Description:
This 207-nucleotide RNA was probed chemically with 2A3 and DMS. As a SHAPE reagent, 2A3 marks flexible, mostly unpaired nucleotides at the ribose 2'-OH. The reactions ran in a buffer of 150 mM KOAc, 10 mM MgCl2 and 150 mM bicine (pH 8.5), at 24 C. Reactivities are given for positions 27 through 156. DMS adducts were read by reverse transcription with MarathonRT. The data come from the RNA Mapping Database (RMDB), library RNAMAK.
RNA sequence: GGGAACGACUCGAGUAGAGUCGAAAAGGGGUCCAAAGGGCACUUGGAUUUAGUAGGCUUUUGACGUCCUGAAGCCUCCACGGGACGAUAAGCCUACUUGUCAGUGCCGCUUUGGACGGAGGCACCCAAAACCAUACGGUCUUCGGACCGUAUGGAAUAGAUGAAAACUAUUCGUAGUUUUCAUCUAAAAAGAAACAACAACAACAAC
Reactivity to 2A3 in 0.01 (KOAc 150mM, MgCl2 10mM, bicine 150mM(pH8.5), 24C), signal-to-noise 5, nucleotides 027 to 156: g030g000g020g010u010c000c000a000a000a000g000g010g000c030a010c050u180u230g140g020a080u300u300u090a020g000u000a000g020g000c040u090u050u130u200g170a100c030g000u010c000c000u010g040a080a030g040c030c030u040c010c010a040c010g000g000g000a000c010g040a050u040a090a000g000c000c000u000a000c000u000u010g010u010c060a020g000u000g000c000c000g040c000u000u000u000g000g000a000c000g000g010a010g000g030c020a060c000c000c000a040a070a040a050c000c000a000u000a000c000g000g000u000c000u020u100c200g100g000a000c010c000g010u000a010u000g000g000a000a000
Reactivity to DMS in 0.01 (KOAc 150mM, MgCl2 10mM, bicine 150mM(pH8.5), 24C), signal-to-noise 3, nucleotides 027 to 156: g020g020g030g030u000c000c000a020a020a040g020g010g030c010a010c020u000u000g040g030a080u000u010u000a000g010u000a010g000g000c000u000u000u000u000g000a230c070g030u000c000c000u000g010a060a170g010c020c020u000c010c040a300c020g010g000g030a050c010g020a130u010a020a060g010c010c010u000a000c000u000u000g010u000c020a080g040u000g010c000c010g010c020u010u000u000g020g010a030c030g000g010a050g020g030c020a120c020c020c010a070a080a120a190c000c000a010u000a010c010g000g000u000c010u000u000c300g050g010a020c000c000g020u000a020u010g010g000a060a080